[RMDB]
RNA sequence: GGGAACGACUCGAGUAGAGUCGAAAAUGGACUCUUGGAAUGGGAAAGAGGAGGGCGGAAAAAGAGGAGCGGGCCUCCCGAUCCGAGGGGCCCGGUGGCCUGAUCUGGAGGGCACUCCGGGCCGUAGUAACUCUCGGCUUCGGCCGAGAGAAAAGAAACAACAACAACAAC
Reactivity to 2A3 in 0.01 (KOAc 150mM, MgCl2 10mM, bicine 150mM(pH8.5), 24C), signal-to-noise 2, nucleotides 027 to 129: u030g020g040a030c020u020c010u070u060g040g000a040a060u100g010g030g000a080a000a130g020a050g030g000a000g010g000g000c010g000g000a000a040a000a000a000g080a000g040g000a020g000c110g030g010g030c000c010u020c000c010c010g100a080u070c000c000g050a090g010g100g000g000c040c000c000g000g000u010g000g000c000c000u020g030a080u050c060u140g080g020a090g060g030g000c100a260c140u070c000c000g000g000g000c000c010g000u000a000g040u000a070a020